[RMDB]
RNA sequence: GGGAACGACUCGAGUAGAGUCGAAAAGAUCCCUCCCAAGAGCUCACAUCGACGGAGUGGUUUGGCACCUCGAUGUCGGCUCGUCACAUCCUGGGGCUGGAGAAGGUCCCAAGGGUUGGGCUGUUCGGUUAAUAGUUAAGUUCGCUUAACUAUUAACAAAAGAAACAACAACAACAAC
Reactivity to DMS in 0.01 (KOAc 150mM, MgCl2 10mM, bicine 150mM(pH8.5), 24C), signal-to-noise 8, nucleotides 027 to 126: g000a160u010c010c010c010u000c000c000c010a160a120g010a020g030c010u000c300a020c010a010u000c000g010a030c250g030g020a110g040u000g020g010u010u010u000g020g010c050a050c000c010u000c010g010a010u000g010u000c240g010g000c000u000c010g010u000c120a070c100a030u000c010c000u010g010g000g010g010c010u000g000g010a140g010a150a210g010g000u000c010c000c010a030a040g010g000g010u000u000g010g000g010c100u010g010u000u010c140g010
Reactivity to 2A3 in 0.01 (KOAc 150mM, MgCl2 10mM, bicine 150mM(pH8.5), 24C), signal-to-noise 7, nucleotides 027 to 126: g090a130u040c000c000c000u020c010c010c000a040a040g000a000g000c010u020c040a010c000a010u000c000g030a040c190g090g040a130g060u060g070g170u180u260u250g200g020c020a010c010c000u010c000g010a000u010g000u010c030g010g000c000u000c000g000u000c010a070c010a060u040c000c010u000g010g000g000g000c020u050g070g080a270g060a220a070g050g010u020c000c000c020a020a060g030g000g000u020u050g020g010g000c070u100g040u090u100c030g050

Chemical mapping of a 177-nucleotide RNA with DMS and 2A3. Conditions: 150 mM KOAc, 10 mM MgCl2 and 150 mM bicine (pH 8.5), 24 C.